The data come from the RNA Mapping Database (RMDB), library OK3TST. Chemical mapping of a 207-nucleotide RNA with DMS and 2A3.
RNA sequence: GGGAACGACUCGAGUAGAGUCGAAAAGCCAGGUGCUGUGGAGUCCGAGUGGGUCGGCUCAAGGUCCUGGGGUCCCCAGCAGCCUUCACUGAACUCUGAAGCCAGCCUGCAGGUGUCAGACGUCACCGGGAUGAUGCUGGGGUGGACGGGGCCCCGGAGCUAUUACCAAAUUCGUUUGGUAAUAGCUAAAAGAAACAACAACAACAAC
Reactivity to DMS in 0.01 (KOAc 150mM, MgCl2 10mM, bicine 150mM(pH8.5), 24C), signal-to-noise 1, nucleotides 027 to 156: g000c030c010a100g010g020u000g020c010u000g090u000g040g010a070g020u010c030c040g000a120g030u000g030g000g060u000c060g020g000c040u000c050a080a080g020g020u000c040c010u010g030g010g020g020u000c000c000c010c000a050g000c030a050g020c070c020u000u000c050a100c060u000g010a180a090c010u000c010u000g000a070a080g020c010c010a090g000c060c020u000g000c070a170g020g040u010g010u000c010a090g020a080c120g000u000c020a060c060c050g030g000g020a080u000g010a060u000g000c010u030g030g000g010g020u000g000g000a050c040g030g010g010g020c020c000c010c010g010g000
Reactivity to 2A3 in 0.01 (KOAc 150mM, MgCl2 10mM, bicine 150mM(pH8.5), 24C), signal-to-noise 2, nucleotides 027 to 156: g040c010c000a030g010g060u100g030c040u040g070u160g120g040a060g040u090c050c010g030a050g040u140g020g050g100u060c020g020g000c030u010c060a040a070g060g000u040c000c040u040g000g000g010g040u060c010c000c000c000a000g010c000a010g000c010c010u080u060c050a080c080u040g080a140a020c000u000c010u060g010a050a010g050c020c020a020g040c020c060u130g040c080a040g000g000u020g070u050c010a020g000a130c090g030u020c030a020c060c030g010g020g000a030u090g000a020u040g020c000u010g000g000g000g030u040g040g040a020c030g000g010g020g030c010c000c000c000g010g000

The 2A3 profile rests on 1,524 reads. For DMS the reverse transcriptase was MarathonRT.